Structure probing data (2A3 and DMS) for a 177-nucleotide construct. Reactivities are given for positions 27 through 126.
RNA sequence: GGGAACGACUCGAGUAGAGUCGAAAACUGCUCCGGCAGCAGUACUGCUUUGCGCCGCCAGUGAUGCGCUGGUAUCAGAUGCGGCGGCGUGAGUGGAUGCCUCCGAUGCUGAUGACGAGGCGGCUGUGUUAGUGUUUCAUUUCGAUGAAACACUAACAAAAGAAACAACAACAACAAC
Reactivity to 2A3 in 0.01 (KOAc 150mM, MgCl2 10mM, bicine 150mM(pH8.5), 24C), signal-to-noise 9, nucleotides 027 to 126: c010u020g010c020u040c040c040g080g000c020a000g000c000a000g040u050a110c010u010g030c000u070u100u260g010c000g000c000c010g010c010c010a100g030u040g070a040u070g000c070g030c240u210g220g020u080a040u090c010a020g120a300u160g170c080g030g000c000g000g000c000g000u010g000a000g000u020g010g030a050u110g000c000c000u000c000c010g020a040u120g070c120u200g080a220u100g020a040c010g010a010g010g010c020g020g020c020u020g010u010
Reactivity to DMS in 0.01 (KOAc 150mM, MgCl2 10mM, bicine 150mM(pH8.5), 24C), signal-to-noise 7, nucleotides 027 to 126: c020u000g000c020u020c100c060g010g000c050a090g010c000a040g010u000a160c030u000g000c000u000u010u020g040c010g020c000c000g020c010c000a160g030u010g000a050u000g010c040g020c230u030g030g010u010a050u000c000a080g000a190u040g020c140g010g010c010g010g000c000g030u000g010a010g020u000g010g010a190u020g010c000c020u000c010c010g000a200u010g010c180u030g010a080u000g010a300c300g010a060g000g000c010g010g010c030u000g010u010
It was measured as part of the RMDB libraries RFM100 and RFMREP. The reactions ran in a buffer of 150 mM KOAc, 10 mM MgCl2 and 150 mM bicine (pH 8.5), at 24 C.